Structure probing data (2A3 and DMS) for a 177-nucleotide construct.
RNA sequence: GGGAACGACUCGAGUAGAGUCGAAAAAGGUGGACUUUCCAAAGGAAAUGUAAACGUGGCGGAUGGAUAAUAAACCACAGAGGGAUCUAUGUAGAAUACCUUAUCCUCGAAACGGCAGAAGAGGAGCGUUGUACGUCAAUUUCGAUUGACGUACAACAAAAGAAACAACAACAACAAC
Reactivity to 2A3 in 0.01 (KOAc 150mM, MgCl2 10mM, bicine 150mM(pH8.5), 24C), signal-to-noise 7, nucleotides 027 to 126: a010g070g010u040g000g030a040c010u050u030u000c020c020a080a030a050g120g020a090a070a040u130g020u160a090a050a040c050g000u040g030g000c010g040g040a040u050g010g050a010u050a140a080u090a070a140a020c020c010a020c050a070g060a070g030g020g000a010u020c020u040a070u140g140u150a030g030a100a040u100a130c010c000u050u060a070u040c010c000u000c010g000a060a100a060c040g030g030c070a040g010a110a010g000a030g010g020a010g010c060
Reactivity to DMS in 0.01 (KOAc 150mM, MgCl2 10mM, bicine 150mM(pH8.5), 24C), signal-to-noise 4, nucleotides 027 to 126: a080g010g030u020g000g010a100c070u020u010u000c010c050a080a090a110g020g000a050a050a040u030g010u030a030a050a060c080g020u000g000g000c070g000g000a170u000g000g000a060u020a050a030u010a050a110a090c030c020a030c130a070g000a100g000g010g010a110u000c070u000a090u000g010u030a050g010a080a040u040a150c060c030u010u000a140u000c010c000u000c030g010a070a050a090c080g010g000c070a060g000a070a130g000a060g000g000a030g000c180
The reactions ran in a buffer of 150 mM KOAc, 10 mM MgCl2 and 150 mM bicine (pH 8.5), at 24 C. DMS adducts were read by reverse transcription with MarathonRT. It was measured as part of the RMDB libraries RFM100 and RFMREP. 2A3 adducts were read by reverse transcription with SuperScript II with manganese.